[RMDB]
RNA sequence: GGGAACGACUCGAGUAGAGUCGAAAACAUGAUAUGUGCUAAUUUAAGGGAAUUAGGACAAAAAAACAUUAUUGCUAAAGCCAAAAAUGAAGUACAUAAAAGGGUGUUAAGCACAAUGGGAAUUAGAUGUGUUUAUAAGGUUCGCCUUAUAAACACAAAAAGAAACAACAACAACAAC
Reactivity to 2A3 in 0.01 (KOAc 150mM, MgCl2 10mM, bicine 150mM(pH8.5), 24C), signal-to-noise 4, nucleotides 027 to 126: c030a030u130g060a030u150a060u210g020u010g040c000u000a020a100u050u040u050a210a120g080g040g030a010a020u000u010a010g040g000a010c000a000a120a000a020a010a010a010c020a040u030u090a090u090u130g000c000u020a060a030a020g040c010c000a110a080a050a010a000u050g020a090a030g100u110a070c000a030u080a030a060a020a010g090g020g020u060g000u100u080a020a020g020c000a000c010a030a030u050g030g020g080a090a080u180u170a120g060a210
Reactivity to DMS in 0.01 (KOAc 150mM, MgCl2 10mM, bicine 150mM(pH8.5), 24C), signal-to-noise 3, nucleotides 027 to 126: c070a030u010g030a130u000a080u000g040u000g010c010u010a060a020u020u000u000a180a200g020g000g000a070a040u000u020a020g000g010a060c050a000a000a070a140a100a080a090c100a050u010u010a080u010u000g010c000u000a020a090a300g020c030c010a000a030a060a110a030u000g000a070a100g000u010a060c060a050u010a020a070a120a150g000g010g030u000g030u010u000a070a050g000c030a040c180a060a040u000g010g010g010a070a100u010u000a090g000a100
Chemical mapping of a 177-nucleotide RNA with 2A3 and DMS. The RNA was probed in 150 mM KOAc, 10 mM MgCl2 and 150 mM bicine (pH 8.5) at 24 C. Reactivities are given for positions 27 through 126.